The data come from the RNA Mapping Database (RMDB), library M2RFOK. The record gives the reactivity of an RNA of 207 nucleotides to DMS and 2A3. The 2A3 profile rests on 2,763 reads. Values cover nucleotides 27 to 156. Conditions: 150 mM KOAc, 10 mM MgCl2 and 150 mM bicine (pH 8.5), 24 C.

RNA sequence: GGGAACGACUCGAGUAGAGUCGAAAAACAUGCUGGCCAACCCAACCCCACGAUCCUCCAUCGGCAUGAUCAUGAUGUGUUCUCAAAUAUCACGCCAGUAAAUCACCAUGCUCGUGCUGGUAAAGGCAACUUAUGCCCAAGUUCGCUUGGGCAUAAAGGGAGAUAAACAGUUCGCUGUUUAUCUCCCAAAAGAAACAACAACAACAAC
Reactivity to DMS in 0.01 (KOAc 150mM, MgCl2 10mM, bicine 150mM(pH8.5), 24C), signal-to-noise 1, nucleotides 027 to 156: a080c020a080u000g030c010u020g010g020c020c030a070a140c000c010c000a100a170c020c010c010c020a140c150g010a160u000c010c000u010c040c040a020u000c010g000g000c010a030u010g010a030u010c020a060u000g000a040u010g020u000g010u020u000c090u000c080a060a070a140u010a080u000c080a070c060g020c060c000a090g000u000a010a090a100u020c010a020c020c010a000u000g000c130u000c000g050u000g020c000u000g010g000u000a030a040a050g000g030c080a080a060c090u000u010a010u000g030c010c010c010a010a020g010u000u010c280g000c010u000u010g000g020g040c010a000u000a000a020a070
Reactivity to 2A3 in 0.01 (KOAc 150mM, MgCl2 10mM, bicine 150mM(pH8.5), 24C), signal-to-noise 4, nucleotides 027 to 156: a000c040a010u070g020c000u020g020g010c000c030a030a010c060c010c040a040a030c010c000c000c010a070c090g040a150u070c020c010u020c030c010a050u040c020g010g010c010a010u020g000a010u000c010a010u030g060a060u070g030u000g030u120u020c060u010c040a080a120a050u210a050u100c070a060c090g040c040c000a020g020u060a020a070a030u100c030a040c030c010a010u010g020c000u010c020g020u000g000c010u000g000g010u040a100a080a000g050g020c010a030a010c020u020u000a000u020g000c000c000c000a010a000g020u030u030c060g020c170u000u000g030g000g020c000a000u000a000a000a000